[RMDB]
RNA sequence: GGGAACGACUCGAGUAGAGUCGAAAAUCUUCUUCGAAACGUUCCAGCGCGUCACUUAAUCCGGAGCGCACGCCGCGAGGCAAAUCGCAUUGCGUGAUAUCACCGUUGACGAUAACCGUCACGUUCUUCAAACGCUUCUGUUCGCAGAAGCGUUUGAAAAAGAAACAACAACAACAAC
Reactivity to DMS in 0.01 (KOAc 150mM, MgCl2 10mM, bicine 150mM(pH8.5), 24C), signal-to-noise 1, nucleotides 027 to 126: u000c060u000u000c010u000u000c060g000a020a060a300c130g000u000u010c000c000a180g000c170g000c000g000u020c110a160c030u000u010a230a020u080c030c110g000g000a230g040c120g000c080a010c030g000c150c300g060c010g000a070g000g020c150a000a060a030u000c100g000c020a150u000u080g050c000g000u000g000a010u000a130u000c020a090c150c000g080u000u030g000a070c000g000a290u050a260a050c110c000g000u000c000a050c060g000u040u010c050u080
Reactivity to 2A3 in 0.01 (KOAc 150mM, MgCl2 10mM, bicine 150mM(pH8.5), 24C), signal-to-noise 3, nucleotides 027 to 126: u020c020u090u020c020u070u020c030g040a070a000a000c010g000u000u000c010c000a030g040c040g000c000g070u080c030a050c130u050u100a060a040u060c000c000g040g000a020g000c020g030c040a030c030g020c030c010g000c000g000a030g070g050c000a010a100a040u060c010g000c080a050u020u240g010c050g030u050g100a010u000a040u300c040a040c080c020g010u050u070g030a050c030g040a070u010a140a060c100c020g000u010c030a000c030g010u060u030c030u040

Conditions: 150 mM KOAc, 10 mM MgCl2 and 150 mM bicine (pH 8.5), 24 C. An RNA of 177 nucleotides, treated with DMS and 2A3 and read out base by base. Values cover nucleotides 27 to 126. The DMS profile rests on 980 reads.